[RMDB]
RNA sequence: GGGAACGACUCGAGUAGAGUCGAAAAAGCGAAGAAUCUGGUCAAACUUGGUCAUUUAGAGGAACUAAAAGUCGUAACAAGGUUUCCGUAGGUGAACCUGCGGAAGGAUCAUUAAAGAUUAUGAAUGAGUAGAUUACUGGGGGAAUCGCUGAAUAUGCCACAUGAAUCAGUUCGCUGAUUCAUGUGGAAAAGAAACAACAACAACAAC
Reactivity to 2A3 in 0.01 (KOAc 150mM, MgCl2 10mM, bicine 150mM(pH8.5), 24C), signal-to-noise 4, nucleotides 027 to 156: a000g030c020g020a030a020g030a050a030u020c020u030g050g000u050c050a040a050a060c100u060u050g020g010u040c010a050u010u060u070a100g030a090g030g080a040a050c030u100a090a050a050a130g090u090c040g050u060a060a040c070a080a080g040g000u010u050u000c000c000g010u000a000g000g000u110g100a140a160c000c000u000g020c000g000g000a010a000g000g000a010u010c000a010u030u150a090a060a020g050a050u090u050a030u160g050a070a050u030g000a010g140u060a030g040a090u040u080a090c040u050g010g000g000g010g020a040a020u030c010g000c010u000g000a030a030u110a060u150g060
Reactivity to DMS in 0.01 (KOAc 150mM, MgCl2 10mM, bicine 150mM(pH8.5), 24C), signal-to-noise 2, nucleotides 027 to 156: a070g030c000g040a050a160g020a080a090u000c030u000g000g040u010c050a090a130a090c030u010u010g010g020u000c050a100u000u030u000a130g000a170g030g010a140a120c090u000a040a080a130a120g000u000c070g020u000a070a030c040a080a100g030g020u000u010u010c010c030g040u000a010g010g000u000g010a080a110c010c000u000g040c010g000g090a010a060g040g050a030u000c030a070u000u000a060a080a110g010a110u000u010a030u000g000a080a140u010g010a060g020u000a010g020a090u000u000a040c030u010g010g010g050g040g000a040a110u000c030g050c020u020g020a040a140u010a090u000g020
Structure probing data (2A3 and DMS) for a 207-nucleotide construct. For 2A3, 2,720 sequencing reads were counted. For 2A3 the reverse transcriptase was SuperScript II with manganese. The reactions ran in a buffer of 150 mM KOAc, 10 mM MgCl2 and 150 mM bicine (pH 8.5), at 24 C. It was measured as part of the RMDB library PDB130.